[RMDB]
RNA sequence: GGGAACGACUCGAGUAGAGUCGAAAACGAUCAGUACGUUCGCGUACUGAUCGAAGCUACUGGAGACAGUAGCAAGUCUAAGACCUUGUUAGGCGGAAACAAGGGAAGAUGGAGGAAGGCCGGACCUCCAUACUUAGACAACCGCCAACCGGCCAACCACUAAAUCGCAUUUCGAUGCGAUUUAGUGAAAAGAAACAACAACAACAAC
Reactivity to 2A3 in 0.01 (KOAc 150mM, MgCl2 10mM, bicine 150mM(pH8.5), 24C), signal-to-noise 2, nucleotides 027 to 156: c010g000a010u000c000a010g010u000a000c010g030u040u100c260g010c000g090u000a000c000u000g000a000u000c000g000a000a010g000c010u000a000c000u000g030g000a060g020a020c000a000g000u010a000g000c010a010a010g000u000c000u010a000a010g020a080c000c000u010u010g020u030u060a140g050g100c090g050g060a040a020a010c000a000a000g000g030g020a040a050g170a040u030g010g010a000g040g000a060a260g000g010c000c020g010g080a220c000c000u000c000c010a000u010a040c000u000u000a000g000a000c020a050a060c070c070g120c080c030a020a030c000c010g000g000c000c010a000a020c030
This 207-nucleotide RNA was probed chemically with 2A3.
Conditions: 150 mM KOAc, 10 mM MgCl2 and 150 mM bicine (pH 8.5), 24 C.